[RMDB]
RNA sequence: GGGAACGACUCGAGUAGAGUCGAAAAGAUAUGGAUCUCCGUAUCUACCCACCCGAUGUGUUCGUUUGACGAAGAUCGGAAACGAUCUUCCGAGAACAUGCAUCGGAGGAUACGGAGAUCCUAAGUCCUUAAUAACAGUGUUCGCACUGUUAUUAAGAAAAGAAACAACAACAACAAC
Reactivity to 2A3 in 0.01 (KOAc 150mM, MgCl2 10mM, bicine 150mM(pH8.5), 24C), signal-to-noise 4, nucleotides 027 to 126: g080a060u190a080u300g000g000a000u000c000u000c010c000g000u000a010u000c010u090a220c100c070c010a030c000c000c020g020a010u010g060u010g130u220u300c260g010u010u050u060g020a020c020g000a000a010g000a000u010c010g030g000a090a080a030c020g000a000u000c000u000u000c010c000g020a020g010a020a000c000a000u050g000c000a000u000c000g010g000a010g000g000a000u000a000c000g010g010a010g000a000u000c000c000u000a010a010g040u060c000
Reactivity to DMS in 0.01 (KOAc 150mM, MgCl2 10mM, bicine 150mM(pH8.5), 24C), signal-to-noise 9, nucleotides 027 to 126: g010a110u010a280u010g000g010a020u000c010u000c000c000g020u000a000u000c000u000a080c060c070c130a300c120c000c000g010a010u000g000u000g010u010u000c270g030u000u000u000g000a300c300g000a010a010g010a000u000c000g000g000a110a100a190c010g000a010u000c000u000u000c000c000g000a240g000a000a010c010a040u000g010c020a010u000c000g000g000a070g020g000a010u000a000c000g010g000a000g010a000u000c000c010u000a020a090g010u000c060
The data come from the RNA Mapping Database (RMDB), library TTRINS. The record gives the reactivity of an RNA of 177 nucleotides to 2A3 and DMS. Conditions: 150 mM KOAc, 10 mM MgCl2 and 150 mM bicine (pH 8.5), 24 C. For 2A3, 32,360 sequencing reads were counted.